RNA sequence: GGGAACGACUCGAGUAGAGUCGAAAAGCAUAACUGUUCGCAGUUAUGCAAAACACGUAGCUGGAAACAGACGCAGUGAAACAAACAAAAGCGAAAACAAAAAAAGCCAACAGUUCGCUGUUGGCAACUUAGGCAAUAGGUUCGCCUAUUGCCUAAGAAAAGAAACAACAACAACAAC
Reactivity to DMS in 0.01 (KOAc 150mM, MgCl2 10mM, bicine 150mM(pH8.5), 24C), signal-to-noise 2, nucleotides 027 to 126: g000c000a040u000a000a010c010u000g020u000u000c080g030c010a040g010u000u000a010u010g000c000a020a020a060a090c020a030c020g030u000a250g000c010u000g000g000a120a120a130c030a030g000a020c020g000c080a160g000u000g020a050a090a130c100a010a060a150c040a060a040a090a090g030c010g020a030a050a090a170c210a060a020a050a130a130a050a130g000c010c000a010a010c020a010g000u000u030c190g050c000u000g010u000u000g000g000c030a010a000
Reactivity to 2A3 in 0.01 (KOAc 150mM, MgCl2 10mM, bicine 150mM(pH8.5), 24C), signal-to-noise 2, nucleotides 027 to 126: g000c010a000u000a010a000c000u020g030u080u030c110g000c030a000g010u010u020a000u000g000c040a020a030a010a000c020a010c010g030u050a000g020c000u030g030g020a050a110a010c020a000g180a140c020g030c090a010g010u040g070a120a050a030c070a030a170a000c030a010a170a030a020g050c040g080a060a000a070a080c130a040a130a000a030a000a030a010g020c020c020a000a010c000a000g050u120u180c200g030c140u030g000u000u000g000g000c020a000a000